[RMDB]
RNA sequence: GGGAACGACUCGAGUAGAGUCGAAAAGUUUAUCCUGUCUCCCAGAACAGAUUAUAAACCCCACGAGUGCAGAGACUUUGUUCUCUUCUCUGCUGUAUUUGCAGAGCUGGUACACAGUAGGAGCUCAAUAAAUACUUGCUGAAGGAAAACAUGGAUACAUUACGCUAGGAUUCGUCCUAGCGUAAUGAAAAGAAACAACAACAACAAC
Reactivity to DMS in 0.01 (KOAc 150mM, MgCl2 10mM, bicine 150mM(pH8.5), 24C), signal-to-noise 2, nucleotides 027 to 156: g020u000u000u000a060u010c090c000u040g000u010c010u010c010c020c010a270g010a130a110c040a040g000a150u000u000a120u020a080a090a130c040c010c000c010a150c100g010a150g040u000g040c080a060g010a120g020a040c060u000u010u010g000u000u000c040u000c000u000u000c030u000c010u000g000c000u000g020u000a070u000u010u010g020c040a180g000a060g010c050u010g010g010u000a070c060a090c070a120g000u020a100g070g000a160g020c040u000c020a080a160u000a020a050a100u000a060c050u000u000g010c030u000g030a080a140g000g020a060a050a040a050c050a050u000g000g000a140u010a120
Reactivity to 2A3 in 0.01 (KOAc 150mM, MgCl2 10mM, bicine 150mM(pH8.5), 24C), signal-to-noise 4, nucleotides 027 to 156: g010u030u040u080a030u050c010c000u000g010u010c040u020c020c030c010a020g050a050a030c020a020g050a030u080u090a070u190a200a100a060c030c010c020c010a020c080g050a050g040u100g030c060a010g030a010g000a080c020u100u150u150g030u140u000c040u000c000u040u030c020u000c000u020g000c010u030g040u160a200u120u180u110g020c030a020g010a010g020c030u050g010g030u080a020c070a000c020a090g060u050a050g020g060a030g010c000u020c040a010a020u070a070a070a010u080a050c020u070u070g010c010u040g040a050a070g040g000a030a060a010a020c030a070u130g050g000a010u050a140
Structure probing data (DMS and 2A3) for a 207-nucleotide construct. DMS adducts were read by reverse transcription with MarathonRT. The reactions ran in a buffer of 150 mM KOAc, 10 mM MgCl2 and 150 mM bicine (pH 8.5), at 24 C. The 2A3 profile rests on 2,633 reads. The DMS profile rests on 4,233 reads.